[RMDB]
RNA sequence: GGGAACGACUCGAGUAGAGUCGAAAAACGGGAAGAGUUCUCAAAUUCUCCAGAAGUUUGUCCCCACCCAACAGUGGCUGAUGGAUUUGAACAAUGCGUUCUCUACUUUUGUGAGAGUACGAAACACGGCAAAUUACAAAUUCGUUUGUAAUUUGCCAAAAGAAACAACAACAACAAC
Reactivity to DMS in 0.01 (KOAc 150mM, MgCl2 10mM, bicine 150mM(pH8.5), 24C), signal-to-noise 2, nucleotides 027 to 126: a070c090g010g030g010a050a060g000a110g010u000u000c120u010c070a060a070a100u000u020c020u000c000c010a070g000a090a090g020u000u000u000g000u010c020c050c020c100a130c060c020c010a060a120c150a110g010u000g000g010c140u000g020a100u010g000g010a120u010u030u010g020a120a080c120a100a080u000g010c090g000u000u000c010u000c040u010a030c010u010u000u000u020g010u000g000a000g000a000g020u000a000c130g010a080a030a050c150a150c220
Reactivity to 2A3 in 0.01 (KOAc 150mM, MgCl2 10mM, bicine 150mM(pH8.5), 24C), signal-to-noise 1, nucleotides 027 to 126: a000c010g000g060g020a120a030g050a020g110u030u000c030u000c040a080a100a040u030u000c020u000c020c000a040g020a170a030g060u060u190u120g060u060c020c000c010c000a020c000c020c010a130a100c040a060g030u040g080g020c060u070g010a080u090g070g020a000u200u100u180g000a020a050c060a100a110u210g080c050g040u090u000c000u080c020u010a050c020u020u090u000u120g040u140g040a000g000a020g000u000a020c030g080a060a070a000c060a040c060
This 177-nucleotide RNA was probed chemically with DMS and 2A3. For DMS the reverse transcriptase was MarathonRT. Reactivities are given for positions 27 through 126. The data come from the RNA Mapping Database (RMDB), library OK2TST.